[RMDB]
RNA sequence: GGGAACGACUCGAGUAGAGUCGAAAACUGCAGGUCAACGGUACUUCUUCAGAUCAGCUAUUGCAGAAGAUAGGUGACCCAAGCGCUCUGGGCCAGUGCGACUGUAUAUAGGAGCUUGUUAUUUGAACCAGAAGCUAACUCUCUCCGAAACAAUGAGCCUAUCCCCUGGUUUCGACCAGGGGAUAGGAAAAGAAACAACAACAACAAC
Reactivity to 2A3 in 0.01 (KOAc 150mM, MgCl2 10mM, bicine 150mM(pH8.5), 24C), signal-to-noise 1, nucleotides 027 to 156: c010u020g000c000a020g000g010u100c020a070a010c080g110g010u070a040c040u000u010c000u010u040c010a020g010a280u030c040a020g060c050u200a100u140u080g040c020a020g010a030a000g000a010u180a040g000g060u010g040a000c040c000c000a070a100g000c030g040c030u030c020u040g000g040g000c120c040a050g080u060g050c020g050a050c020u030g060u110a100u030a010u130a190g040g010a000g060c020u010u040g000u100u110a300u150u140u090g040a040a010c000c000a010g020a120a000g040c050u030a010a010c010u020c030u000c000u000c040c020g100a040a020a000c070a050a200u240g010a040g020